[RMDB]
RNA sequence: GGGAACGACUCGAGUAGAGUCGAAAACUCGCGGGCCUGGCCGCCAAUCCCCAAACCCCGCGUUGCUCGGCUGGCCAGGUCACGAACCCCCAGUUCGCCGACAGGCUGUACCGCUGGCAGCCGGACCUAUUGUGCAUGCUUUCGAGCAUGCACAAUAAAAAGAAACAACAACAACAAC
Reactivity to 2A3 in 0.01 (KOAc 150mM, MgCl2 10mM, bicine 150mM(pH8.5), 24C), signal-to-noise 2, nucleotides 027 to 126: c030u020c030g050c100g020g000g020c010c000u000g000g010c010c000g010c000c000a010a110u070c020c010c000c010a040a080a220c030c010c010c040g000c070g020u040u040g050c080u110c190g020g000c050u090g010g010c000c000a000g010g000u030c000a040c010g000a020a080c000c000c010c000c000a020g020u040u080c010g010c020c010g040a040c040a060g030g000c000u020g020u040a090c000c030g060c060u040g020g000c000a010g000c000c000g000g010a030c000c000
Reactivity to DMS in 0.01 (KOAc 150mM, MgCl2 10mM, bicine 150mM(pH8.5), 24C), signal-to-noise 2, nucleotides 027 to 126: c060u000c040g020c080g020g000g000c020c000u000g000g010c010c010g000c010c040a160a140u020c050c020c010c040a060a110a100c110c020c040c030g000c070g010u010u000g030c070u010c110g010g020c020u020g020g010c010c010a000g000g000u020c010a010c020g030a090a190c050c020c000c000c060a140g010u020u020c040g000c020c020g000a110c140a150g000g010c020u000g030u020a110c070c080g010c040u000g000g020c010a020g000c020c010g000g020a090c070c050
An RNA of 177 nucleotides, treated with 2A3 and DMS and read out base by base.
The data come from the RNA Mapping Database (RMDB), library OK1LIB.
DMS adducts were read by reverse transcription with MarathonRT.